[RMDB]
Source information: This 207-nucleotide RNA was probed chemically with 2A3. Source: RMDB library M2RFPK, as collected in RNAgym.
RNA sequence: GGGAACGACUCGAGUAGAGUCGAAAACUGCCGCCGGGACGCAGUGAUCCUCGCAGGGUCGCACGGUCGCCUCGGGUCGGCCUCGUGUCGGCUCUACCUGCGAGGGGAGCGAGUGGCGAGCCCGACCAAAACUUUCUCGCCUUCGGGCGAGAAAGAAGAUCUUAUACCGGUUCGCCGGUAUAAGAUCAAAAGAAACAACAACAACAAC
Reactivity to 2A3 in 0.01 (KOAc 150mM, MgCl2 10mM, bicine 150mM(pH8.5), 24C), signal-to-noise 3, nucleotides 027 to 156: c030u060g060c020c010g010c010c000g110g100g140a060c010g030c010a140g190u000g000a000u000c000c000u000c000g000c000a000g010g000g020u040c000g000c020a010c020g040g020u010c010g010c000c010u060c050g010g000g000u060c000g010g020c010c010u090c120g080u090g090u130c020g010g000c010u010c050u150a070c020c010u000g000c010g000a000g000g000g000g000a000g010c000g010a060g070u130g030g000c000g010a020g020c010c010c020g010a030c010c000a050a070a020a070c000u000u010u000c010u000c000g020c020c000u040u070c170g060g000g000c000g000a000g000a000a000a000g000a000a000
Reactivities are rounded to 0.1 and cut off at 0 and 3.